RNA sequence: GGGAACGACUCGAGUAGAGUCGAAAACUUGACAACAUCUAUCAAGGGUCAACCAGGUACGAGGCAGGGAGAGCUCCAGCGUACAGAGUGAUCAGAGGUGACAUUAGCAAGAGCGCUGACCAAGCUAACAAGAUGUUGAGUUCGCUCAACAUCUUGUAAAAGAAACAACAACAACAAC
Reactivity to 2A3 in 0.01 (KOAc 150mM, MgCl2 10mM, bicine 150mM(pH8.5), 24C), signal-to-noise 2, nucleotides 027 to 126: c000u010u070g000a000c030a130a020c010a200u020c050u210a090u070c070a060a070g100g000g030u020c020a020a030c090c000a040g060g000u030a030c040g020a040g100g000c040a030g060g000g020a070g020a010g000c000u010c060c010a020g030c050g040u030a020c030a010g070a040g060u050g040a070u050c030a010g060a020g060g040u040g050a020c000a080u110u090a020g000c020a090a010g010a010g100c010g000c010u000g030a050c010c030a040a000g060c010u060a070
Reactivity to DMS in 0.01 (KOAc 150mM, MgCl2 10mM, bicine 150mM(pH8.5), 24C), signal-to-noise 2, nucleotides 027 to 126: c030u010u010g010a040c090a080a070c100a130u010c060u000a080u010c100a030a080g010g010g000u010c100a120a070c070c100a070g000g020u000a020c100g020a080g000g000c090a060g020g000g000a100g000a090g000c010u000c030c010a100g020c050g010u000a030c050a080g010a100g010u000g000a050u020c050a070g020a060g000g020u000g010a060c070a030u000u000a080g000c050a010a060g010a140g030c030g020c050u000g020a140c040c040a070a130g000c070u000a060